[RMDB]
RNA sequence: GGGAACGACUCGAGUAGAGUCGAAAAGGGGUCGUAUCGGGAGCGAGAUGAAACAUGUUGACGAGCUGAAGCCUCCACGGCUCGAAGGUGUAACCUCGCGUUGAUCGAUACGACGGAGGCACCCAAACGUACAAAUGGGUUCGCCCAUUUGUACGAACCCCUUUACCUGGUUCGCCAGGUAAAGGGGAAAAGAAACAACAACAACAAC
Reactivity to 2A3 in 0.01 (KOAc 150mM, MgCl2 10mM, bicine 150mM(pH8.5), 24C), signal-to-noise 2, nucleotides 027 to 156: g140g000g000g000u000c010g030u000a000u010c010g000g000g030a030g020c030g000a030g020a030u120g090a090a170a030c100a080u300g100u280u290g270a060c040g010a000g000c000u000g000a160a010g010c000c000u000c000c000a010c000g010g000c000u000c000g020a050a040g130g010u090g010u070a060a140c000c000u000c000g010c010g050u130u020g000a000u000c020g000a000u000a000c020g000a000c000g030g000a020g000g000c000a020c000c000c020a060a100a060c000g000u000a000c000a000a000a020u010g010g000g000u030u060c300g100c030c000c000a000u000u000u000g000u000a000c000g000a000a000
An RNA of 207 nucleotides, treated with 2A3 and read out base by base. Conditions: 150 mM KOAc, 10 mM MgCl2 and 150 mM bicine (pH 8.5), 24 C. 2A3 adducts were read by reverse transcription with SuperScript II with manganese. Source: RMDB library RNAMAK, as collected in RNAgym. Reactivities are rounded to 0.1 and cut off at 0 and 3.